The record gives the reactivity of an RNA of 177 nucleotides to DMS and 2A3.
RNA sequence: GGGAACGACUCGAGUAGAGUCGAAAAUCGCUUCAGAGGCUGGUACAUCCGUAUUUGUACCAAAAUCUGUACCAAAUUAUCCAAAUUCACUUAUGUUUGAUUAUUAAUACAUUGAUUUUCAAAGCAUCUUGUACAGGAGAUUCGUCUCCUGUACAAGAAAAGAAACAACAACAACAAC
Reactivity to DMS in 0.01 (KOAc 150mM, MgCl2 10mM, bicine 150mM(pH8.5), 24C), signal-to-noise 1, nucleotides 027 to 126: u000c170g040c110u000u000c050a120g000a030g000g000c300u000g000g000u000a000c000a000u000c300c300g080u060a030u000u010u000g000u000a000c000c000a000a030a300a060u000c020u010g000u000a090c040c090a080a140a080u010u000a030u010c030c020a000a050a100u000u000c120a030c170u000u010a000u000g040u000u080u000g000a020u000u000a010u010u010a030a170u040a150c090a050u000u000g000a010u000u000u000u000c030a020a090a030g070c070a030u000
Reactivity to 2A3 in 0.01 (KOAc 150mM, MgCl2 10mM, bicine 150mM(pH8.5), 24C), signal-to-noise 6, nucleotides 027 to 126: u070c030g010c070u060u010c020a030g010a020g020g010c020u020g020g000u000a010c010a020u050c140c070g070u140a220u090u070u030g000u010a000c000c000a000a000a000a000u010c010u020g010u030a070c020c030a040a060a090u190u160a090u100c030c020a040a060a050u170u170c070a070c110u220u190a090u160g060u030u020u030g010a010u010u030a020u010u060a140a100u100a150c090a120u070u150g020a040u010u000u030u070c030a050a040a040g100c010a050u000

Source information
For DMS the reverse transcriptase was MarathonRT. Conditions: 150 mM KOAc, 10 mM MgCl2 and 150 mM bicine (pH 8.5), 24 C.